[RMDB]
RNA sequence: GGGAACGACUCGAGUAGAGUCGAAAACAACGAGUUGAUCGGUCCCAUCGCCAGUUACUGAUAUAUCAAUUCGGUCUGCGCCGGCGUCGAGUGCAUUUUCGAUCAACUCGGCAACAACGUCUGCUGGUCGAGUAAUGACUUCCGCUGCGGCGACUGCCAGUAGCGGAGGGUUCGCCCUCCGCUACUGAAAAGAAACAACAACAACAAC
Reactivity to 2A3 in 0.01 (KOAc 150mM, MgCl2 10mM, bicine 150mM(pH8.5), 24C), signal-to-noise 3, nucleotides 027 to 156: c080a000a040c020g010a010g010u010u020g020a020u020c010g030g060u040c020c050c010a090u060c040g000c010c010a010g020u040u100a040c030u040g010a010u060a040u040a050u250c120a190a120u120u050c020g060g020u020c060u140g030c050g050c050c020g040g010c010g020u130c210g050a050g030u100g050c020a060u050u030u050u140c000g010a020u000c000a000a010c020u010c010g020g000c020a050a090c020a010a030c060g040u040c030u040g040c020u050g050g040u070c030g020a030g040u080a100a110u100g060a070c020u060u050c040c010g210c300u030g000c050g020g000c010g020a030c050u020g030c010
Reactivity to DMS in 0.01 (KOAc 150mM, MgCl2 10mM, bicine 150mM(pH8.5), 24C), signal-to-noise 1, nucleotides 027 to 156: c040a060a070c000g000a070g020u000u030g000a010u000c010g030g020u010c030c000c060a160u000c040g010c000c000a150g000u000u030a120c060u000g020a070u000a150u010a180u000c120a110a110u000u000c010g020g050u000c090u010g010c070g000c060c060g030g020c040g000u000c050g010a060g020u000g050c070a080u000u000u020u000c060g010a030u000c000a060a020c000u040c000g000g010c030a090a110c080a050a080c080g000u000c030u000g010c030u000g010g000u000c020g010a090g030u000a090a060u010g000a080c000u000u000c060c010g050c000u000g010c040g050g030c020g000a190c070u000g020c150

Structure probing data (2A3 and DMS) for a 207-nucleotide construct. Conditions: 150 mM KOAc, 10 mM MgCl2 and 150 mM bicine (pH 8.5), 24 C.